[RMDB]
RNA sequence: GGGAACGACUCGAGUAGAGUCGAAAAGCCGCCCGUGCCAUCGCGGAUGCGGAAGCAGCUCUGGCACAUCAGAAUUCGGCUACCGCGCAGCUCGAUCUGCAGGUCGUCUCGGCAAUUCUGAACGCGCGGGCAUAGGGCGCUUCGGCGCCCUAUGCCCAAAAGAAACAACAACAACAAC
Reactivity to 2A3 in 0.01 (KOAc 150mM, MgCl2 10mM, bicine 150mM(pH8.5), 24C), signal-to-noise 1, nucleotides 027 to 126: g120c090c080g050c020c000c020g030u000g060c080c000a150u140c050g020c010g120g000a110u160g030c000g000g030a020a090g010c050a040g000c010u030c040u040g050g000c020a000c020a110u060c000a000g030a030a000u020u000c000g000g000c000u000a020c000c010g070c070g020c100a000g010c010u100c190g120a300u060c030u010g020c030a000g020g000u000c010g040u000c070u000c110g100g010c110a070a070u000u000c000u000g000a000a040c060g080c000g010c010
An RNA of 177 nucleotides, treated with 2A3 and read out base by base. Source: RMDB library OK1LIB, as collected in RNAgym. Conditions: 150 mM KOAc, 10 mM MgCl2 and 150 mM bicine (pH 8.5), 24 C. For 2A3, 556 sequencing reads were counted.